[RMDB]
RNA sequence: GGGAACGACUCGAGUAGAGUCGAAAAGUCGAUUACGCCCUGGCCAAGGACUGCACCAUAGAUUCUGUCCUAGUCAUUGGUGAUGUAACUCAGGGCGGGUUUCAUGAGCCCAACGUUGACAGCACUCCGUGCAACAAGUUUUCGAACUUGUUGCACGAAAAGAAACAACAACAACAAC
Reactivity to DMS in 0.01 (KOAc 150mM, MgCl2 10mM, bicine 150mM(pH8.5), 24C), signal-to-noise 3, nucleotides 027 to 126: g010u030c060g000a040u010u010a100c030g040c020c000c010u000g020g030c140c080a140a030g000g020a070c070u010g010c070a010c070c080a030u010a260g000a060u020u030c100u030g030u030c050c030u000a060g000u000c010a220u000u010g010g020u000g000a140u000g040u040a070a110c090u020c030a010g010g000g010c010g010g000g000u000u020u020c080a100u040g000a060g000c020c000c000a080a060c150g020u000u010g000a100c030a130g000c120a050c030u000c080
Reactivity to 2A3 in 0.01 (KOAc 150mM, MgCl2 10mM, bicine 150mM(pH8.5), 24C), signal-to-noise 5, nucleotides 027 to 126: g010u000c020g010a030u040u100a050c010g010c000c000c020u000g010g030c090c060a100a020g100g110a050c010u070g050c060a020c030c010a050u060a100g060a070u140u030c030u170g140u100c030c020u020a010g030u040c020a060u050u030g000g000u030g010a070u080g030u080a080a050c020u010c070a000g000g000g010c090g000g000g000u030u040u030c090a090u180g030a010g010c000c000c000a030a020c090g030u020u070g050a020c020a020g040c020a040c030u000c020
This 177-nucleotide RNA was probed chemically with DMS and 2A3.
The 2A3 profile rests on 4,873 reads.
It was measured as part of the RMDB library OK1LIB.